[RMDB]
RNA sequence: GGGAACGACUCGAGUAGAGUCGAAAAUUUGCUACACUCCUAUAGAUGAGAUACCCUAUAAGAGUUUCUCUGAUAGUGGUUGCAUUCUUCCAUCUGAGUGCACUAUGUUUAGGGAUGCAGAGGGCCGGUACGCUGUUGUUCGCAACAGCGAAAAGAAACAACAACAACAAC
Reactivity to 2A3 in 0.01 (KOAc 150mM, MgCl2 10mM, bicine 150mM(pH8.5), 24C), signal-to-noise 7, nucleotides 027 to 129: u030u010u050g010c000u040a020c010a010c050u030c020c010u040a020u050a040g090a050u090g050a030g040a150u180a120c010c000c000u010a040u020a080a010g040a000g000u000u040u010c020u000c000u020g030a020u030a070g090u050g070g000u090u130g000c000a010u010u040c010u110u060c100c060a190u090c120u130g000a000g010u010g040c010a000c010u030a040u080g050u000u040u080a030g000g010g010a030u070g010c010a000g020a040g040g040g010c000c000g040g000u030a020
Reactivity to DMS in 0.01 (KOAc 150mM, MgCl2 10mM, bicine 150mM(pH8.5), 24C), signal-to-noise 6, nucleotides 027 to 129: u000u000u000g020c060u020a080c150a070c000u000c020c020u000a060u050a060g040a100u030g030a010g000a090u000a000c030c230c010u040a100u000a070a060g030a010g040u010u050u010c000u020c020u020g000a060u000a110g050u030g040g020u010u010g000c040a040u030u000c040u010u010c140c110a120u060c110u030g010a070g040u050g000c050a040c050u020a060u000g030u020u010u020a050g050g060g010a060u040g000c060a060g020a080g020g010g060c060c000g000g030u000a100